[RMDB]
RNA sequence: GGGAACGACUCGAGUAGAGUCGAAAACGAACCGUCGAAAUAAGGCACUGCUGCUGGCCGGAUUCUGCGCCUCGCUCCUUUCGACCUCGGCGCUGGCCGCUACCCGGGUGCCGGGCACCUACACGUACGAUAAAAUAGCGUUCGCGCUAUUUUAUCGAAAAGAAACAACAACAACAAC
Reactivity to DMS in 0.01 (KOAc 150mM, MgCl2 10mM, bicine 150mM(pH8.5), 24C), signal-to-noise 4, nucleotides 027 to 126: c100g030a080a110c070c010g020u010c050g000a080a080a110u050a120a110g000g010c040a060c000u020g000c010u000g010c060u000g000g000c020c030g020g000a110u020u030c040u000g000c030g020c030c030u000c140g010c090u000c020c110u010u000u010c100g000a060c050c030u020c080g000g000c050g000c050u010g000g010c050c000g010c040u010a070c050c050c000g010g020g000u000g020c030c040g000g000g020c040a050c040c020u030a060c130a050c120g010u010a150
Reactivity to 2A3 in 0.01 (KOAc 150mM, MgCl2 10mM, bicine 150mM(pH8.5), 24C), signal-to-noise 8, nucleotides 027 to 126: c050g020a040a050c030c020g070u080c050g090a060a040a110u200a120a090g040g000c030a020c070u100g020c020u040g000c020u040g050g010c010c020g020g010a040u160u060c040u090g020c010g010c010c010u050c050g020c020u050c010c010u050u140u100c080g040a090c000c020u030c030g020g000c020g000c030u050g040g000c000c010g000c030u060a070c000c020c000g040g010g010u030g010c000c020g010g010g000c040a060c000c000u100a050c070a010c090g120u180a040